[RMDB]
RNA sequence: GGGAACGACUCGAGUAGAGUCGAAAAAGCGUAGCGGUACGCCGCUACGCAAGGCGCAUUUGAACUGUAUUGUACGCCUUGCCUAAAGCAAAAGUACUAAAAAAACGUGCCGUUACGACGGCACGAAAAAACAUCCAUUGGUUCGCCAAUGGAUGAACUUAUGUCCCUCGUUCGCGAGGGACAUAAGAAAAGAAACAACAACAACAAC
Reactivity to 2A3 in 0.01 (KOAc 150mM, MgCl2 10mM, bicine 150mM(pH8.5), 24C), signal-to-noise 1, nucleotides 027 to 156: a000g000c000g010u020a000g010c050g010g000u040a020c270g020c020c000g000c010u000a000c000g000c000a000a020g000g000c000g010c020a060u080u120u230g160a200a140c130u110g060u110a070u180u120g000u030a050c030g000c010c000u020u010g050c000c010u180a120a030a000g040c020a030a000a030a030g070u130a140c140u260a060a040a000a000a000a000a060c020g000u010g000c050c000g010u050u000a060c250g010a010c000g070g000c000a000c000g000a000a000a000a000a000a000c000a000u020c000c000a000u000u010g020g000u080u040c190g010c090c000a000a000u000g000g000a000u000g000a000a050